Background
This 177-nucleotide RNA was probed chemically with 2A3 and DMS. The DMS profile rests on 1,634 reads. The 2A3 profile rests on 1,221 reads. For DMS the reverse transcriptase was MarathonRT. The data come from the RNA Mapping Database (RMDB), library OK2TRN.
RNA sequence: GGGAACGACUCGAGUAGAGUCGAAAAAUGGCUGGACACGACUCACGCAUGGGCUGGUGAUUAGCUACGGAGGGUGACAUGAGUCAAGGUGACAUAAUUCACUUCACCAGUCAGGCAUUAUGGCUGGAACUUCACCGAUGUUCGCAUCGGUGAAGUUAAAAGAAACAACAACAACAAC
Reactivity to 2A3 in 0.01 (KOAc 150mM, MgCl2 10mM, bicine 150mM(pH8.5), 24C), signal-to-noise 1, nucleotides 027 to 126: a000u060g020g000c040u040g030g000a040c030a010c080g120a010c020u000c010a050c030g070c020a110u090g000g000g100c120u060g040g030u080g030a120u080u090a050g020c000u040a000c030g020g070a020g080g000g010u060g040a030c030a080u120g010a040g040u000c020a040a080g130g010u060g050a010c020a130u200a050a130u160u080c050a050c020u000u030c040a030c070c000a010g000u000c010a000g010g050c030a060u000u140a000u210g020g000c020u040g070g000
Reactivity to DMS in 0.01 (KOAc 150mM, MgCl2 10mM, bicine 150mM(pH8.5), 24C), signal-to-noise 2, nucleotides 027 to 126: a120u010g050g000c020u010g000g010a140c080a130c080g000a060c060u000c020a080c050g010c080a120u000g000g010g000c090u000g000g000u000g000a080u010u010a070g020c080u010a070c100g000g020a100g010g000g030u010g010a070c080a080u000g000a100g010u010c030a060a070g010g020u010g020a070c150a080u000a080a090u000u000c070a050c060u000u000c080a200c010c020a030g030u010c010a020g010g000c110a130u000u000a100u010g010g020c000u010g010g010

Conditions: 150 mM KOAc, 10 mM MgCl2 and 150 mM bicine (pH 8.5), 24 C.